[RMDB]
RNA sequence: GGGAACGACUCGAGUAGAGUCGAAAAUGACGGGAAAUUAGGGUUUUGUACCGGAGAGGGAGCCUGAGAGAUUGCUCCCACGUCCAAGGACGGCAGCAGGCGCGAAAAUUGCCCACUCUUUGCAGGAGUUGGGCACAAGGUUCGCCUUGUGCCCAACAAAAGAAACAACAACAACAAC
Reactivity to 2A3 in 0.01 (KOAc 150mM, MgCl2 10mM, bicine 150mM(pH8.5), 24C), signal-to-noise 2, nucleotides 027 to 126: u180g040a080c120g010g040g010a180a000a010u160u140a200g090g000g060u060u060u110u140g010u070a050c000c030g040g000a030g000a040g000g000g000a030g000c060c070u110g000a050g010a040g040a060u000u150g000c010u000c010c000c010a000c000g100u030c000c000a160a030g000g000a000c000g040g000c030a000g000c040a010g010g040c020g000c060g060a000a030a040a130u040u050g010c000c000c000a000c020u070c000u010u100u140g080c110a050g000g100a070
Reactivity to DMS in 0.01 (KOAc 150mM, MgCl2 10mM, bicine 150mM(pH8.5), 24C), signal-to-noise 1, nucleotides 027 to 126: u030g020a060c040g000g000g060a210a040a040u000u020a090g000g020g000u000u000u000u000g010u010a090c050c060g080g000a150g000a110g040g010g030a000g000c000c070u000g000a220g010a210g010a130u100u000g040c020u000c000c000c000a000c180g030u020c000c040a000a140g000g000a130c180g000g000c040a120g050c140a010g070g010c060g060c010g000a020a030a040a160u020u030g000c020c000c040a020c020u000c000u000u020u000g000c210a180g000g000a040